RNA sequence: GGGAACGACUCGAGUAGAGUCGAAAAGAUGUUCGUGCUGAUCUGUGUGCUAAACUCACUGGUGGCACAAUCGCUGGGACUGCUGAUCGGGGCGGGGAUGAACAUCGAGACGGGCGUAUUCCUCGGCCGUUCUUGAGCCUUUCGAGGCUCAAGAACGAAAAGAAACAACAACAACAAC
Reactivity to 2A3 in 0.01 (KOAc 150mM, MgCl2 10mM, bicine 150mM(pH8.5), 24C), signal-to-noise 1, nucleotides 027 to 126: g010a010u020g010u040u060c020g000u040g070c030u110g100a090u020c020u000g060u020g000u010g050c060u170a220a130a130c060u060c080a080c070u030g080g040u060g000g000c000a000c050a040a040u070c010g000c060u100g040g040g040a030c050u090g030c080u100g090a130u070c000g010g000g060g090c050g000g030g010g060a060u040g000a050a010c010a030u060c020g000a050g000a010c020g010g000g020c000g020u000a130u080u030c000c000u000c020g040g080c020
Reactivity to DMS in 0.01 (KOAc 150mM, MgCl2 10mM, bicine 150mM(pH8.5), 24C), signal-to-noise 1, nucleotides 027 to 126: g000a050u010g020u000u000c080g010u010g040c030u000g010a030u010c050u010g020u020g010u000g000c090u010a050a160a090c040u000c090a070c080u010g020g030u000g000g060c030a010c050a110a110u000c090g030c040u010g000g020g000a120c080u010g020c040u000g010a080u000c000g000g000g010g000c090g000g000g000g000a070u000g020a040a070c080a060u000c040g010a150g010a180c040g010g000g000c010g000u000a080u000u000c040c030u000c030g010g000c040
Chemical mapping of a 177-nucleotide RNA with 2A3 and DMS. Conditions: 150 mM KOAc, 10 mM MgCl2 and 150 mM bicine (pH 8.5), 24 C.